RNA sequence: GGGAACGACUCGAGUAGAGUCGAAAAGAUAUGGACAGCUACCCACCUCUGAAAGGCGAAGAACUCGGAAACGAGGGAGCCUACGCAGAGAGGCUGUCCUAAGUCAAAAGAUCAGUUCGCUGAUCAACUUCUGUUAGACGUUCGCGUCUAACAGAAGAAAAGAAACAACAACAACAAC
Reactivity to DMS in 0.01 (KOAc 150mM, MgCl2 10mM, bicine 150mM(pH8.5), 24C), signal-to-noise 1, nucleotides 027 to 126: g000a110u020a180u000g070g000a010c000a000g020c010u010a160c010c000c020a300c130c000u000c000u000g000a090a100a060g000g010c000g000a080a050g000a190a070c020u000c000g000g030a070a120a240c020g000a020g000g000g020a040g050c000c000u000a010c300g000c010a000g000a000g000a130g010g000c000u000g010u000c000c000u000a050a000g000u000c120a030a050a070a170g000a000u000c010a010g010u000u000c190g060c000u010g010a000u000c010a140a080
Reactivity to 2A3 in 0.01 (KOAc 150mM, MgCl2 10mM, bicine 150mM(pH8.5), 24C), signal-to-noise 1, nucleotides 027 to 126: g050a020u190a130u220g000g010a000c000a000g110c010u150a300c010c030c030a090c000c010u040c000u020g000a080a040a020g030g000c020g230a300a040g000a100a040c000u000c030g020g000a040a070a040c010g010a000g000g000g000a000g020c010c010u010a030c160g040c000a000g020a010g040a000g020g020c000u000g010u000c000c020u020a030a000g050u010c030a140a020a090a000g010a020u010c020a000g060u150u230c280g000c100u000g000a040u020c020a000a010